[RMDB]
RNA sequence: GGGAACGACUCGAGUAGAGUCGAAAAGGGAUCGCGGACCGAGGGCGGAAGCCUGCUUCAGACAGGAGUAAUCCCCGCAGAAACAGGGUUUUCACCCUACCUUUCUUCGGGUUUCCUUCCUCUGCUUGCGGCCUCGCCCGGAGUCUUCGAAUCCAGCCCAAAUAGACUACUUCGGUAGUCUAUUUGGAAAAGAAACAACAACAACAAC
Reactivity to DMS in 0.01 (KOAc 150mM, MgCl2 10mM, bicine 150mM(pH8.5), 24C), signal-to-noise 2, nucleotides 027 to 156: g000g000g030a250u030c060g020c060g010g010a030c030c030g000a300g010g010g010c030g070g010a070a080g030c010c010u000g050c010u000u000c020a060g010a110c080a050g010g010a080g030u010a040a090u000c090c020c000c010g020c070a080g000a040a030a040c070a050g010g020g010u000u010u000u010c190a110c020c020c020u000a070c080c030u000u010u000c010u000u000c030g030g010g020u000u000u000c040c010u000u020c050c030u000c020u000g010c120u020u020g010c030g020g010c030c010u000c020g030c000c000c000g040g000a180g000u000c020u000u010c040g030a080a130u000c010c000a150g020c110
Reactivity to 2A3 in 0.01 (KOAc 150mM, MgCl2 10mM, bicine 150mM(pH8.5), 24C), signal-to-noise 5, nucleotides 027 to 156: g080g010g000a000u000c010g010c040g030g000a000c010c000g020a020g010g010g000c050g050g030a040a020g010c020c100u170g000c010u010u000c000a030g000a090c160a120g000g010a000g010u030a010a040u080c030c000c000c000g000c000a000g000a010a020a070c300a070g020g020g020u080u130u300u300c160a050c010c010c000u080a150c010c000u010u000u000c000u010u020c000g030g000g000u010u020u000c000c000u020u050c010c000u000c000u020g080c220u030u040g000c000g000g000c000c010u010c000g000c000c000c000g000g000a000g000u000c000u010u010c000g000a010a020u000c000c000a030g040c000